[RMDB]
RNA sequence: GGGAACGACUCGAGUAGAGUCGAAAAACGGUCGUACGCGACCGAGGCGCGGCUAGGGCGACGGACCGAACAAUGGCAUCCCGCAUUCUGCCAUCCGCCGCGCAGCUUCUUCUCAAACGGUGCGGAAAAAAGUAGGACACCUUCGGGUGUCCUACAAGUCGUAUUGGUUGUUCGCAACCAAUACGACAAAAGAAACAACAACAACAAC
Reactivity to 2A3 in 0.01 (KOAc 150mM, MgCl2 10mM, bicine 150mM(pH8.5), 24C), signal-to-noise 1, nucleotides 027 to 156: a000c010g020g000u000c010g020u020a020c230g000c010g090a000c000c000g000a060g030g000c000g010c000g020g000c020u020a010g020g010g020c070g080a140c190g020g300a020c000c010g000a010a000c040a030a010u020g000g000c010a030u140c040c000c000g000c000a010u290u070c010u030g020c000c000a000u020c010c020g000c010c020g020c020g020c010a020g000c000u140u090c020u060u000c030u010c010a050a060a040c030g020g010u010g010c030g000g000a010a000a070a000a070a000g000u010a000g010g000a000c010a000c000c020u020u060c170g050g000g010u000g000u000c010c000u000a000c000a000a000
The record gives the reactivity of an RNA of 207 nucleotides to 2A3. For 2A3 the reverse transcriptase was SuperScript II with manganese.